[RMDB]
RNA sequence: GGGAACGACUCGAGUAGAGUCGAAAAAUACAAACAUCGCGGUGACAGUAGACUCCAUCAUCAAUCCUGAGGCCCCUUUAGCACUGCGCCUGUCGGGACAGCUACUUCUUGGUGUGGUCAAAGUGCAGUAUGAUGAUAACUUCGGUUAUCAUCAUACAAAAGAAACAACAACAACAAC
Reactivity to DMS in 0.01 (KOAc 150mM, MgCl2 10mM, bicine 150mM(pH8.5), 24C), signal-to-noise 6, nucleotides 027 to 126: a080u010a080c110a100a060a120c090a040u010c060g020c050g020g020u000g010a070c100a050g000u010a080g010a080c040u000c050c040a050u000c050a070u010c080a080a100u000c030c020u000g010a080g010g010c020c020c020c060u010u000u000a080g000c050a040c030u000g000c230g010c020c020u000g000u000c040g010g010g020a060c190a060g000c070u000a050c090u000u010c050u000u000g010g030u000g010u000g010g010u000c070a040a100a060g000u010g020c090a180
Reactivity to 2A3 in 0.01 (KOAc 150mM, MgCl2 10mM, bicine 150mM(pH8.5), 24C), signal-to-noise 5, nucleotides 027 to 126: a000u110a020c060a000a120a010c030a070u060c030g000c030g090g030u050g030a040c030a040g070u090a020g040a030c020u010c040c020a030u050c010a010u030c010a040a150u050c010c020u020g030a050g060g040c000c010c000c030u030u080u100a030g000c020a010c050u030g010c010g010c020c010u070g020u040c010g000g030g030a020c010a020g030c020u060a040c030u090u060c020u050u080g040g010u070g030u080g040g030u050c040a140a030a020g030u050g020c010a010

Source: RMDB library OK2TST, as collected in RNAgym.
This 177-nucleotide RNA was probed chemically with DMS and 2A3.
The reactions ran in a buffer of 150 mM KOAc, 10 mM MgCl2 and 150 mM bicine (pH 8.5), at 24 C.